Structure probing data (DMS and 2A3) for a 177-nucleotide construct. For DMS the reverse transcriptase was MarathonRT. The RNA was probed in 150 mM KOAc, 10 mM MgCl2 and 150 mM bicine (pH 8.5) at 24 C. 2A3 adducts were read by reverse transcription with SuperScript II with manganese. It was measured as part of the RMDB library TTRDES. As a SHAPE reagent, 2A3 marks flexible, mostly unpaired nucleotides at the ribose 2'-OH. Values cover nucleotides 27 to 126.

RNA sequence: GGGAACGACUCGAGUAGAGUCGAAAAGAUAUGGAUAUUCGACGGGAGCUGUGAUCGGAAACGAUCAUACAGCAUCGAUCGUCGAUAUCCUAAGUCAAACCAUAGCCUCGUUCGCGAGGCUAUGGAAUCAUAUAAUGAUCUUCGGAUCAUUAUAUGAAAAAGAAACAACAACAACAAC
Reactivity to DMS in 0.01 (KOAc 150mM, MgCl2 10mM, bicine 150mM(pH8.5), 24C), signal-to-noise 8, nucleotides 027 to 126: g000a020u010a170u010g000g010a020u000a010u010u010c010g010a010c010g030g010g010a150g020c000u000g020u000g000a020u000c000g010g000a040a040a080c000g010a010u000c000a110u010a080c040a020g020c000a230u010c300g010a110u010c000g010u000c000g010a020u000a000u000c000c000u000a000a090g010u000c010a150a150a250c010c000a000u000a010g010c000c000u000c000g010u010u010c240g020c010g010a020g010g010c000u000a000u000g000g000a040a040
Reactivity to 2A3 in 0.01 (KOAc 150mM, MgCl2 10mM, bicine 150mM(pH8.5), 24C), signal-to-noise 8, nucleotides 027 to 126: g010a010u030a020u080g000g000a000u020a050u130u300c010g000a010c020g050g110g170a120g020c000u000g010u010g010a010u000c000g010g000a020a010a000c010g000a000u010c010a040u200a070c020a000g010c010a070u190c180g210a280u060c020g010u000c000g000a000u000a000u000c000c000u010a020a010g010u000c040a080a060a120c000c000a000u000a000g010c010c000u010c010g040u080u060c300g010c010g160a000g000g000c000u000a000u000g000g000a000a000